[RMDB]
An RNA of 177 nucleotides, treated with DMS and read out base by base. The RNA was probed in 150 mM KOAc, 10 mM MgCl2 and 150 mM bicine (pH 8.5) at 24 C.
RNA sequence: GGGAACGACUCGAGUAGAGUCGAAAAGUCAAGAUGUGUAGGAUAGGUGGGAGGCUUUGAAGUGUGGACGCCAGUCUGCAUGGAGCCGACCUUGAAAUACCACCCUUUAAUGGUAAAACAAAGUGAAGUCCUUUGUUAGGUUCGCCUAACAAAGGACAAAAGAAACAACAACAACAAC
Reactivity to DMS in 0.01 (KOAc 150mM, MgCl2 10mM, bicine 150mM(pH8.5), 24C), signal-to-noise 2, nucleotides 027 to 126: g010u000c020a060a240g020a040u000g010u000g000u000a010g000g000a060u000a040g020g010u000g000g000g000a130g000g000c010u000u000u040g010a110a110g000u000g000u000g000g000a000c000g000c100c290a020g010u000c000u000g000c000a000u000g000g010a020g010c000c020g000a090c300c050u000u000g000a050a000a100u000a090c000c000a010c020c010c010u010u000u000a060a120u020g020g000u010a020a080a090a080c100a010a030a090g000u000g000a100a130